[RMDB]
RNA sequence: GGGAACGACUCGAGUAGAGUCGAAAAGUAAGAAUUCGUUCUUACCUAUUUCCUAAGUCGUCCACUAUCCCUUUGUCAGAGCCUAUCGGAAACGAUAGCGCUCUUGGAUUUAAGGGACGAAUGGACGAUAUGGAUGUCAUACUGAUUCGUCAGUAAACUAAUCAGUAUGGUUCGCCAUACUGAUUAGAAAAGAAACAACAACAACAAC
Reactivity to DMS in 0.01 (KOAc 150mM, MgCl2 10mM, bicine 150mM(pH8.5), 24C), signal-to-noise 4, nucleotides 027 to 156: g010u010a010a010g010a040a050u000u010c300g010u010u000c000u000u000a010c010c010u000a140u010u000u000c000c010u000a100a160g010u010c000g040u000c000c000a020c050u010a170u000c000c010c000u000u000u000g020u000c010a030g000a010g040c010c010u010a000u010c010g010g000a180a130a260c020g010a010u000a010g010c120g040c010u000c000u000u000g010g010a030u000u000u020a010a040g020g010g010a020c040g020a040a030u010g000g010a040c000g020a020u000a050u000g000g000a190u000g010u000c040a230u000a030c020u000g000a070u000u010c250g010u010c000a030g020u000a060a080a240
Reactivity to 2A3 in 0.01 (KOAc 150mM, MgCl2 10mM, bicine 150mM(pH8.5), 24C), signal-to-noise 5, nucleotides 027 to 156: g010u010a000a010g020a010a030u100u150c230g050u080u000c020u000u000a020c000c010u060a220u080u080u020c010c000u030a160a050g030u000c000g000u000c000c010a030c060u060a050u040c010c000c000u000u000u000g010u010c010a000g000a000g010c000c000u000a000u010c000g040g040a100a040a060c020g010a000u000a000g040c080g000c020u000c000u000u020g010g000a000u140u100u290a000a000g000g000g000a000c010g040a060a280u010g000g000a000c000g000a000u000a030u050g060g020a040u120g110u200c100a040u030a080c010u020g010a030u050u070c190g080u030c090a010g000u070a050a050a090